[RMDB]
RNA sequence: GGGAACGACUCGAGUAGAGUCGAAAAUGGGCUACCAGUAAGCGAAAAAUGAUACAGGACGAAAAAAACAUAAUUCGAGAUUUUUCAGGAUGGAUGUUUUUAGGUAUCUAUCAAAACUAUUCUGAUGCAACGUAGAGCACGUUCGCGUGCUCUACAAGUACUAUUUUUUGUUCGCAAAAAAUAGUACAAAAGAAACAACAACAACAAC
Reactivity to DMS in 0.01 (KOAc 150mM, MgCl2 10mM, bicine 150mM(pH8.5), 24C), signal-to-noise 2, nucleotides 027 to 156: u000g000g000g030c010u000a060c020c040a100g020u000a070a080g020c050g010a040a120a080a120a180u000g010a100u000a070c010a110g000g000a150c070g000a000a000a020a020a030a030a030c040a010u000a070a070u000u000c010g010a210g010a150u020u010u020u000u000c060a080g000g000a020u000g000g000a030u000g010u000u000u000u000u000a070g040g030u000a020u000c050u000a120u010c070a060a100a090a050c060u000a100u000u010c040u000g020a100u010g010c060a060a070c100g010u000a000g010a030g010c000a000c000g050u010u000c260g040c000g070u020g000c000u000c000u000a000c000a010a110
Reactivity to 2A3 in 0.01 (KOAc 150mM, MgCl2 10mM, bicine 150mM(pH8.5), 24C), signal-to-noise 5, nucleotides 027 to 156: u070g030g020g010c030u060a060c020c020a030g040u080a020a040g050c030g060a060a050a000a030a040u120g010a020u050a060c050a050g090g050a040c060g090a100a060a000a000a020a020a000c040a020u070a050a030u060u030c040g020a020g040a270u080u100u070u160u160c030a030g030g000a010u030g080g080a020u020g030u010u020u010u020u050a040g050g000u050a040u050c030u030a040u050c040a000a050a040a050c010u040a070u130u070c020u030g040a040u070g020c030a040a050c080g000u000a000g000a000g000c000a000c000g010u030u030c100g020c000g040u000g000c000u000c000u000a000c000a000a000

Structure probing data (DMS and 2A3) for a 207-nucleotide construct. It was measured as part of the RMDB library M2RFOK.